[RMDB]
RNA sequence: GGGAACGACUCGAGUAGAGUCGAAAACGCGCAGGGAUGUUUUCGAAUCUAUGUUUAUGCUCUCCCUUUGACUGAUUCACAGUUACGAGCAUGGAUUCGCAUAGAUAGGCGUCUCAAAGGGAGCGCGGCUGAGCUGUCUAUUCGUAGACAGCUCAGCAAAAGAAACAACAACAACAAC
Reactivity to DMS in 0.01 (KOAc 150mM, MgCl2 10mM, bicine 150mM(pH8.5), 24C), signal-to-noise 1, nucleotides 027 to 126: c020g010c070g000c020a200g000g000g000a000u020g030u000u000u000u020c070g010a080a090u000c000u000a000u000g010u000u000u000a040u010g020c020u000c030u000c040c080c030u000u010u000g000a000c030u000g000a300u010u000c300a190c010a000g000u000u000a090c140g000a010g030c000a030u000g010g000a100u000u000c180g010c090a040u000a030g000a110u000a120g000g000c020g000u000c030u000c000a030a010a100g000g020g010a100g000c070g000c010g000